[RMDB]
RNA sequence: GGGAACGACUCGAGUAGAGUCGAAAAUUUAACUCUGGAGAUUGCGACGAAGGGUACAUUCGCAUUGAUAACAAAGGUACUACUGACGGUAAUACGUCUAUGCUAUUCUUCGCAGAACUAGACUGCUAUGAAGGUACGACUGACCGAUCUUGGCAAAGCGUAUUCUAUCUUUCGAGAUAGAAUACGCAAAAGAAACAACAACAACAAC
Reactivity to 2A3 in 0.01 (KOAc 150mM, MgCl2 10mM, bicine 150mM(pH8.5), 24C), signal-to-noise 4, nucleotides 027 to 156: u050u040u000a080a000c040u010c030u050g050g000a010g010a110u060u070g040c020g000a010c040g070a080a050g060g000g020u040a030c050a080u050u070c000g000c070a060u080u200g060a080u100a160a020c050a080a050a050g080g000u050a000c020u030a030c040u020g030a010c000g020g000u070a100a090u090a140c060g000u000c010u030a060u220g020c000u080a130u220u040c000u020u020c030g000c010a000g000a040a000c010u030a050g110a130c010u010g000c010u040a040u090g020a020a000g060g010u050a010c020g010a030c060u060g010a000c000c010g130a160u010c020u030u080g080g000c050a060a060a030
Reactivity to DMS in 0.01 (KOAc 150mM, MgCl2 10mM, bicine 150mM(pH8.5), 24C), signal-to-noise 2, nucleotides 027 to 156: u010u020u020a070a080c070u000c050u000g000g030a080g000a090u000u000g030c060g030a050c030g020a110a110g050g020g040u000a070c070a110u000u000c060g050c020a100u000u000g040a100u000a040a110c070a040a100a160g040g000u000a020c010u000a080c020u000g010a120c050g050g000u020a090a080u000a030c000g020u000c020u000a110u010g050c010u000a080u000u000c060u000u000c020g000c010a090g010a070a190c080u000a100g020a070c040u000g010c000u000a070u000g010a080a040g000g000u000a050c070g000a140c040u010g000a020c040c030g000a070u020c030u000u000g020g010c040a050a040a210